RNA sequence: GGGAACGACUCGAGUAGAGUCGAAAAAGAGAAUCACAGAUCUCAACAAAACCUACCUUGUUUCUUGCUGUGAGAAUGUGAUGUUUCCUUCAGAGUAUGGAACAAGGCUCGAGAAGGGGUUAGAAGGAGGAUCGAGUAUUUUCGAAUACUCGAUCCUAAAAGAAACAACAACAACAAC
Reactivity to DMS in 0.01 (KOAc 150mM, MgCl2 10mM, bicine 150mM(pH8.5), 24C), signal-to-noise 1, nucleotides 027 to 126: a110g000a200g000a100a030u000c060a050c000a090g010a150u000c020u010c000a090a120c090a110a050a120a060c070c020u000a110c100c000u010u010g000u000u000u010c010u000u000g000c060u000g000u030g000a060g010a010a090u000g020u010g010a140u000g000u010u000u010c030c030u000u000c040a070g040a010g020u000a020u000g000g020a070a050c040a040a060g000g020c040u000c060g000a070g010a090a080g010g000g000g000u000u010a100g000a090a130g000g000